[RMDB]
RNA sequence: GGGAACGACUCGAGUAGAGUCGAAAAUAGUAAACACACACACAGGUUAAAAUAAUUGGGAGAUCAUUAGAAUGAGAUGACCCCAGCGCCUUGGGUUUCAACUCAAGCAAACCAAAGUCCAUCUCAGUGUACAUGGUUAUAGUUCAGGUAAGCAGAAGUAUCCUAGGAUAUUCGUAUCCUAGGAUACAAAAGAAACAACAACAACAAC
Reactivity to 2A3 in 0.01 (KOAc 150mM, MgCl2 10mM, bicine 150mM(pH8.5), 24C), signal-to-noise 3, nucleotides 027 to 156: u070a010g050u060a010a100a010c030a010c000a000c000a000c010a000c030a130g010g090u080u090a070a070a050a110u110a100a120u100u020g010g030g000a080g030a110u020c010a010u040u100a030g090a220a090u130g010a050g010a060u010g020a020c000c010c000c000a020g050c040g040c050c030u010u020g050g000g000u070u300u230c140a120a060c010u010c030a000a000g000c030a050a020a020c010c000a080a070a000g050u020c070c030a030u020c030u020c050a020g010u020g020u090a020c040a040u050g040g000u040u030a130u050a100g050u050u080c050a020g020g080u040a070a010g040c030a010g030a090a010
Reactivity to DMS in 0.01 (KOAc 150mM, MgCl2 10mM, bicine 150mM(pH8.5), 24C), signal-to-noise 2, nucleotides 027 to 156: u000a100g000u000a070a050a080c060a150c050a110c070a060c050a030c040a090g010g010u000u000a030a080a090a100u010a060a100u000u000g010g020g000a130g030a060u000c020a060u000u000a130g040a130a090u000g010a060g000a070u000g000a090c020c010c050c040a100g010c060g020c140c010u000u000g000g020g000u000u000u010c160a080a090c020u010c010a020a050g000c030a070a060a050c030c040a040a050a060g010u000c070c030a040u000c010u000c020a070g000u000g040u000a040c040a050u000g000g010u010u000a070u000a070g020u000u000c060a080g010g000u000a030a060g010c040a070g010a080a170

Structure probing data (2A3 and DMS) for a 207-nucleotide construct.
For 2A3, 1,521 sequencing reads were counted.
The reactions ran in a buffer of 150 mM KOAc, 10 mM MgCl2 and 150 mM bicine (pH 8.5), at 24 C.
Source: RMDB library OK3TST, as collected in RNAgym.